[RMDB]
RNA sequence: GGGAACGACUCGAGUAGAGUCGAAAAGAUAUGGAGUCAGGCUGCGAGCUUUGAUCGAAGGUCGGAAACGACCUUCGGGAGCUCCAGCUGACUCCUAAGUCAAAAGGUCCCUGUUCGCAGGGACCAAGGUGAUUAGAAUGUUCGCAUUCUAAUCACCAAAAGAAACAACAACAACAAC
Reactivity to 2A3 in 0.01 (KOAc 150mM, MgCl2 10mM, bicine 150mM(pH8.5), 24C), signal-to-noise 3, nucleotides 027 to 126: g010a020u060a050u170g000g000a000g020u010c030a030g190g300c020u050g090c300g070a010g000c010u300u300u120g060a070u160c010g010a010a010g010g020u010c000g020g050a050a060a030c000g000a000c020c000u000u010c000g010g000g000a000g000c010u000c000c010a010g000c000u010g000a000c000u000c000c000u010a000a000g020u000c030a000a040a060a150g010g000u010c010c000c000u010g020u030u080c300g020c030a000g010g000g000a000c010c000a000a000
Reactivity to DMS in 0.01 (KOAc 150mM, MgCl2 10mM, bicine 150mM(pH8.5), 24C), signal-to-noise 2, nucleotides 027 to 126: g030a030u000a300u010g000g010a030g040u010c000a030g010g020c010u000g010c220g020a000g000c000u000u000u000g000a090u010c000g000a020a000g030g000u000c010g010g000a110a080a250c000g020a030c000c000u000u000c000g000g020g000a000g020c000u010c020c000a010g020c020u000g000a010c000u000c000c000u010a010a060g000u020c030a080a070a140a200g000g000u000c000c000c010u000g000u000u030c200g030c020a000g000g010g010a000c000c000a000a010